[RMDB]
RNA sequence: GGGAACGACUCGAGUAGAGUCGAAAAGGUGAAGAAACUCGGUAAGUGGCCUAGUUUGAUCGAUGUGGCAACAGCUUGUGCAAUGAUGACUAUUUUUGCUCCAUCAACAAGAACAUCAGAAAUUCCACGACGCUAACUAGUUCGCUAGUUAGCGUCGAAAAGAAACAACAACAACAAC
Reactivity to DMS in 0.01 (KOAc 150mM, MgCl2 10mM, bicine 150mM(pH8.5), 24C), signal-to-noise 1, nucleotides 027 to 126: g000g000u000g000a100a220g040a010a050a030c080u000c050g000g000u050a080a160g010u000g000g000c000c000u040a070g030u030u000u000g000a000u010c120g060a060u010g000u000g000g000c090a030a010c240a020g000c000u000u040g000u040g000c050a020a200u060g000a050u020g030a070c060u020a070u000u000u000u000u000g010c080u000c050c030a030u010c030a070a120c090a040a000g000a030a000c050a020u000c050a090g110a080a060a180u000u010c000c000a170
Reactivity to 2A3 in 0.01 (KOAc 150mM, MgCl2 10mM, bicine 150mM(pH8.5), 24C), signal-to-noise 3, nucleotides 027 to 126: g020g020u100g060a090a070g080a050a130a020c000u020c060g040g000u070a190a100g020u070g180g000c020c020u030a040g040u060u070u050g100a150u110c100g030a020u000g050u020g020g000c020a000a020c010a110g040c030u070u120g060u070g130c060a050a190u100g050a030u040g000a090c040u030a150u040u040u000u080u040g040c090u040c010c000a100u100c030a020a070c000a020a050g070a030a010c000a070u070c010a000g070a110a060a030u120u000c050c000a040
Source: RMDB library OK1LIB, as collected in RNAgym.
The record gives the reactivity of an RNA of 177 nucleotides to DMS and 2A3.
Values cover nucleotides 27 to 126.
Values are in units of 0.01, from 0 to 300, in steps of 10.
For 2A3, 1,581 sequencing reads were counted.